[RMDB]
RNA sequence: GGGAACGACUCGAGUAGAGUCGAAAAAUACAUUUAACUAAUGCAUUGGCUAAGGCAGUGAUACAUACAAUCAAAUUGAAUGGCAUUGUAUUUGUGCAUGUUAUUACAAGUAGUGAUAUUUGCCCUAAGGCGGAACGUUCUUCGGAACGUUCCGCCUAAAAGAAACAACAACAACAAC
Reactivity to 2A3 in 0.01 (KOAc 150mM, MgCl2 10mM, bicine 150mM(pH8.5), 24C), signal-to-noise 1, nucleotides 027 to 126: a040u000a000c000a000u000u000u150a250a000c000u130a090a000u000g030c000a000u000u300g280g000c070u000a100a100g030g050c090a000g000u030g070a180u220a070c070a000u100a000c070a120a190u040c040a000a000a300u000u010g040a060a000u010g000g100c000a000u020u020g140u000a280u000u000u180g180u060g280c000a000u000g000u130u220a000u110u080a040c090a090a000g000u000a000g000u060g040a150u000a060u090u050u050g000c000c000c000u000a020